[RMDB]
RNA sequence: GGGAACGACUCGAGUAGAGUCGAAAAGAGGUCGAGGAACGGUGAAUAAGCUACCGGAAGAGGGAAUAGGCACCAAAUUGGGAACGGUGGUUUGGGCCGAACCAAUUGCUGCCACGGUCGCAGUCGGGAACGUGGUCGAUUUCGAUCGACCACGUUCAAAAGAAACAACAACAACAAC
Reactivity to 2A3 in 0.01 (KOAc 150mM, MgCl2 10mM, bicine 150mM(pH8.5), 24C), signal-to-noise 1, nucleotides 027 to 126: g040a000g000g020u030c010g010a050g030g040a020a080c030g010g030u050g050a030a030u200a120a060g010c020u070a020c000c020g000g050a050a020g070a070g040g030g020a070a170u140a140g010g000c000a030c060c000a000a030a110u030u010g000g030g000a220a070c010g020g020u070g000g080u140u150u080g020g100g000c000c000g000a010a000c010c000a000a050u030u040g000c020u020g000c020c040a090c060g060g060u040c030g000c020a000g010u050c020g020g080
Reactivity to DMS in 0.01 (KOAc 150mM, MgCl2 10mM, bicine 150mM(pH8.5), 24C), signal-to-noise 2, nucleotides 027 to 126: g000a050g010g010u000c050g000a030g000g000a120a130c060g020g000u000g040a090a080u000a110a130g010c060u010a090c050c030g010g030a060a080g000a060g000g020g010a080a040u000a170g010g020c010a050c110c030a040a050a050u000u000g030g000g020a070a140c090g030g010u000g020g000u000u000u020g020g000g010c030c010g010a050a200c020c010a000a020u000u000g000c210u000g000c000c000a120c130g000g000u000c080g020c040a020g020u000c120g030g020